[RMDB]
RNA sequence: GGGAACGACUCGAGUAGAGUCGAAAAAAGCUACGCGUUGAUAAGACCGUAGUGGCCCGGUUAAUGACCAGGGGUAUGGUAACAACGGAAAGAGAUGUCACAAUGGGUGAUCCGCAGCCAAACACCCGACUUCGGAAGAAGAGGGUGCAGGUUCAGAGUAUAACGCUGUGUUCGCACAGCGUUAUACAAAAGAAACAACAACAACAAC
Reactivity to DMS in 0.01 (KOAc 150mM, MgCl2 10mM, bicine 150mM(pH8.5), 24C), signal-to-noise 1, nucleotides 027 to 156: a030a140g010c000u000a040c000g020c210g050u000u000g010a300u020a150a140g010a070c010c000g000u000a050g010u000g000g010c020c010c040g050g010u010u000a030a090u000g000a100c040c010a200g000g020g000g000u000a030u000g030g000u010a040a060c050a020a140c050g010g010a070a030a040g010a070g010a080u000g010u000c050a140c050a110a100u010g030g000g010u000g000a060u000c010c010g030c100a070g020c030c010a060a070a130c000a010c000c000c000g000a080c020u010u000c050g030g030a180a300g000a020a030g030a300g010g000g010u000g010c010a090g000g030u000u010c000a090g010a300
Reactivity to 2A3 in 0.01 (KOAc 150mM, MgCl2 10mM, bicine 150mM(pH8.5), 24C), signal-to-noise 2, nucleotides 027 to 156: a000a000g040c010u010a010c000g090c040g020u000u000g070a160u080a280a030g000a010c000c000g000u000a000g000u030g060g020c000c000c020g000g000u100u080a130a070u130g060a020c020c050a070g000g020g010g000u040a060u110g050g030u080a050a060c050a030a020c080g050g040a040a060a000g090a010g000a030u080g040u080c030a030c050a170a120u080g070g010g010u010g020a020u010c070c110g030c010a000g000c000c010a050a140a000c000a000c000c010c030g110a230c010u010u010c010g080g010a090a050g000a000a000g000a060g000g000g000u000g020c020a000g050g000u030u030c050a020g050a010